[RMDB]
RNA sequence: GGGAACGACUCGAGUAGAGUCGAAAAAGAGGCAGUGAUCCUGCUUCGAGACGAAGAUCGCCAUCCGGGUCCGCUUAUCAGAGAACUCGAUCCGCCAGUCCAUCCGGUACUUGAUGGCGAUCGGCUCACACCCACUACUUUUCGAAGUAGUGGGUGUAAAAGAAACAACAACAACAAC
Reactivity to DMS in 0.01 (KOAc 150mM, MgCl2 10mM, bicine 150mM(pH8.5), 24C), signal-to-noise 4, nucleotides 027 to 126: a120g020a030g000g000c000a010g010u010g010a200u020c130c010u000g000c010u000u000c000g000a140g010a120c170g000a160a130g000a020u000c010g000c000c010a010u000c010c050g010g000g000u010c010c120g010c070u000u000a090u010c210a090g000a100g000a070a050c050u000c120g000a060u010c040c040g010c150c130a130g010u000c030c040a140u000c150c060g000g020u010a070c070u000u000g000a020u000g000g010c010g000a010u000c000g000g000c090u000c060
Reactivity to 2A3 in 0.01 (KOAc 150mM, MgCl2 10mM, bicine 150mM(pH8.5), 24C), signal-to-noise 2, nucleotides 027 to 126: a020g010a000g020g000c000a000g010u030g130a060u040c010c000u010g000c000u030u020c010g010a000g010a030c090g060a070a030g010a020u000c010g010c010c000a000u020c030c010g020g000g020u020c020c010g030c070u100u160a140u280c110a080g060a030g010a300a060c040u040c120g030a050u010c050c000g040c030c020a020g020u000c020c010a090u070c070c080g020g020u060a070c020u020u060g010a010u000g000g000c010g010a000u000c010g010g000c000u050c010
The record gives the reactivity of an RNA of 177 nucleotides to DMS and 2A3.
Values cover nucleotides 27 to 126.
The DMS profile rests on 4,084 reads.
It was measured as part of the RMDB library OK2TST.
Conditions: 150 mM KOAc, 10 mM MgCl2 and 150 mM bicine (pH 8.5), 24 C.
For 2A3 the reverse transcriptase was SuperScript II with manganese.